[RMDB]
RNA sequence: GGGAACGACUCGAGUAGAGUCGAAAAAAUGGUAACCUUACGCAUAUUAAUUCACCAAUGUUUUUAACUGGUCUACUGCACACUAUAUUUCCAGCUAACUUCCAAGUCGGCUUCCUUACCAGACCAUGGGGAAUCCUCAGCUCAUAUUGCCCAGCCCAGGCAGUAGUAUGUUCGCAUACUACUGCCUAAAAGAAACAACAACAACAAC
Reactivity to 2A3 in 0.01 (KOAc 150mM, MgCl2 10mM, bicine 150mM(pH8.5), 24C), signal-to-noise 1, nucleotides 027 to 156: a010a020u110g020g000u050a000a080c010c020u030u070a050c070g000c040a020u030a120u080u190a160a160u120u200c060a060c130c000a080a110u120g070u050u050u050u040u180a050a020c030u000g000g030u020c040u060a090c030u090g010c040a010c020a010c070u030a040u050a050u300u050u030c000c000a010g000c040u060a020a100c000u010u070c020c020a110a000g030u040c020g070g010c000u010u050c070c000u070u080a040c010c000a060g040a040c010c010a040u080g000g000g010g010a000a030u010c000c010u040c030a020g000c000u040c030a070u090a130u100u080g020c000c010c000a000g180c000c000c010